Description:
The record gives the reactivity of an RNA of 207 nucleotides to 2A3. For 2A3, 802 sequencing reads were counted. Conditions: 150 mM KOAc, 10 mM MgCl2 and 150 mM bicine (pH 8.5), 24 C. It was measured as part of the RMDB library M2RFPK. 2A3 adducts were read by reverse transcription with SuperScript II with manganese.
[RMDB]
RNA sequence: GGGAACGACUCGAGUAGAGUCGAAAAUUGCGCCUCCGAUUCGCCGUCGGCAUUUCCCCAGCAGCCAUGACCUACCAGGCUGCGGUGCGGCUCGCCGCACAGGUCAUCCCUCAUCGGGCCCGUCCUGGAUAGGGCUAUACUUUCGAGUAUAGCCCAAACUGAAUAGACCGUUCGCGGUCUAUUCAGUAAAAGAAACAACAACAACAAC
Reactivity to 2A3 in 0.01 (KOAc 150mM, MgCl2 10mM, bicine 150mM(pH8.5), 24C), signal-to-noise 1, nucleotides 027 to 156: u070u110g030c050g020c000c020u090c060c050g050a090u150u040c070g010c080c050g050u030c020g080g000c030a030u010u030u040c000c000c010c020a030g000c000a010g020c030c000a210u150g030a040c000c010u050a090c100c010a000g000g000c000u010g000c030g010g040u050g020c020g000g000c050u060c090g190c000c000g030c000a010c000a020g010g030u000c000a060u030c010c010c040u070c000a120u110c060g000g040g000c030c020c000g090u110c000c010u030g000g030a060u110a160g020g000g000c010u000a010u000a000c010u040u060u150c180g010a000g020u000a000u010a010g000c000c010c000a040a000